[RMDB]
The data come from the RNA Mapping Database (RMDB), library OK2TRN.
An RNA of 177 nucleotides, treated with DMS and 2A3 and read out base by base.
In probing experiments dimethyl sulfate is read out at A N1 and C N3, which are open when not base-paired.
For DMS the reverse transcriptase was MarathonRT.
RNA sequence: GGGAACGACUCGAGUAGAGUCGAAAAUCUGUUUACAAGUUAUCGUUAAGUCCAUGUCUGACUACGAUUCCGUAAACAGAAGCCAGUUUACGUCAAGUCCGACAUGGACUCUUGGCAGAACUGAUCAGCUAAUAGUCCGAUUCGUCGGACUAUUAGCAAAAGAAACAACAACAACAAC
Reactivity to DMS in 0.01 (KOAc 150mM, MgCl2 10mM, bicine 150mM(pH8.5), 24C), signal-to-noise 3, nucleotides 027 to 126: u000c010u000g010u000u010u000a100c030a100a030g010u010u010a080u000c130g000u000u000a070a050g010u000c000c020a050u000g000u010c020u020g000a030c000u000a110c180g000a080u000u010c190c070g000u010a000a020a010c010a060g000a130a130g010c140c130a110g010u000u010u000a020c040g010u000c050a070a020g010u000c010c090g010a030c040a020u000g020g000a000c020u000c020u010u000g000g010c010a110g000a040a090c050u000g010a110u000c140a130
Reactivity to 2A3 in 0.01 (KOAc 150mM, MgCl2 10mM, bicine 150mM(pH8.5), 24C), signal-to-noise 2, nucleotides 027 to 126: u000c000u010g020u030u060u080a070c040a050a060g010u090u070a160u220c130g030u080u210a140a010g000u000c020c000a020u040g030u000c010u000g020a020c000u070a060c130g040a050u140u010c090c040g000u000a000a000a020c020a020g180a040a000g060c030c050a030g000u000u030u010a020c030g020u010c030a030a030g000u000c000c000g030a050c040a030u020g000g000a000c000u010c020u010u000g000g000c000a010g020a090a010c050u090g020a070u160c080a020